[RMDB]
RNA sequence: GGGAACGACUCGAGUAGAGUCGAAAAGAAAGAAAGUAUUGAAAGUAUUGUGGGAAAUAAUGUGUAAAUCAUUGACCGUUCCUGCGCUGGUAAGAAUAAAAUUUUAGUCCAGACACCACCAGUAUAACCAAUCUAGUGACCUUCGGGUCACUAGAAAGUGUAAUCAUUUCUUCGGAAAUGAUUACACAAAAGAAACAACAACAACAAC
Reactivity to 2A3 in 0.01 (KOAc 150mM, MgCl2 10mM, bicine 150mM(pH8.5), 24C), signal-to-noise 3, nucleotides 027 to 156: g030a010a060a010g070a050a160a000g050u100a090u140u140g030a100a080a010g030u060a070u080u110g030u030g000g020g020a020a040a020u020a020a020u020g030u010g010u040a030a010a030u050c000a020u030u030g030a010c000c010g030u110u090c020c030u030g010c040g010c010u000g010g000u040a020a020g030a040a020u160a160a150a140a180u050u100u010u060a020g020u000c000c000a010g010a030c030a030c040c020a000c010c010a010g030u050a080u040a170a020c070c030a040a040u010c000u000a000g000u000g000a010c000c000u000u010c090g110g000g000u000c040a000c000u000a000g000a010a010a000
Reactivity to DMS in 0.01 (KOAc 150mM, MgCl2 10mM, bicine 150mM(pH8.5), 24C), signal-to-noise 1, nucleotides 027 to 156: g000a080a090a140g000a180a040a150g090u000a090u010u020g010a130a080a200g000u010a030u000u010g000u000g000g000g020a070a070a070u000a030a030u010g000u000g000u000a080a100a300u010c010a040u000u020g030a060c060c040g020u000u000c030c000u000g000c010g060c020u000g000g030u000a060a060g000a030a050u020a070a080a030a300u000u000u030u000a160g030u000c020c020a080g010a130c110a050c020c010a040c060c000a040g000u000a010u000a030a070c090c030a030a140u000c030u000a000g000u000g040a030c010c000u000u000c300g070g030g000u010c000a000c020u000a000g000a000a000a110